[RMDB]
The record gives the reactivity of an RNA of 177 nucleotides to 2A3 and DMS. The RNA was probed in 150 mM KOAc, 10 mM MgCl2 and 150 mM bicine (pH 8.5) at 24 C. DMS adducts were read by reverse transcription with MarathonRT. For 2A3, 1,901 sequencing reads were counted. For 2A3 the reverse transcriptase was SuperScript II with manganese.

RNA sequence: GGGAACGACUCGAGUAGAGUCGAAAAGAUAUGGAUGAUCCUACUCAGCGAUGAAACUGUUCGGAAACGAACAGUGGAGCUGUGUAGGAGUCAUCCUAAGUCAAACAGUUGCGUUCGCGCAACUGAACAAACCAAUCUCCUUCGGGAGAUUGGUUUGAAAAGAAACAACAACAACAAC
Reactivity to 2A3 in 0.01 (KOAc 150mM, MgCl2 10mM, bicine 150mM(pH8.5), 24C), signal-to-noise 1, nucleotides 027 to 126: g040a010u120a060u210g000g000a030u000g000a030u020c000c010u010a030c020u020c090a000g050c000g300a300u040g000a020a000a020c000u000g020u000u000c000g000g070a120a050a080c010g010a000a000c000a000g020u020g000g000a010g060c010u000g010u000g000u000a000g040g000a010g020u000c000a000u020c010c000u010a000a010g070u020c030a060a020a070c000a020g000u030u010g000c000g050u100u080c300g000c010g000c110a020a000c000u010g000a050a050
Reactivity to DMS in 0.01 (KOAc 150mM, MgCl2 10mM, bicine 150mM(pH8.5), 24C), signal-to-noise 2, nucleotides 027 to 126: g000a040u000a300u000g000g010a020u010g000a140u000c000c000u000a020c000u000c000a020g000c000g000a120u040g000a120a180a010c010u000g000u000u000c020g000g010a090a090a260c000g030a000a000c000a000g020u000g000g010a020g020c000u040g000u000g000u000a010g010g000a000g000u000c000a010u010c000c000u000a030a080g010u000c040a170a150a300c010a010g000u000u010g010c010g040u000u000c270g020c010g000c000a010a010c000u000g000a070a180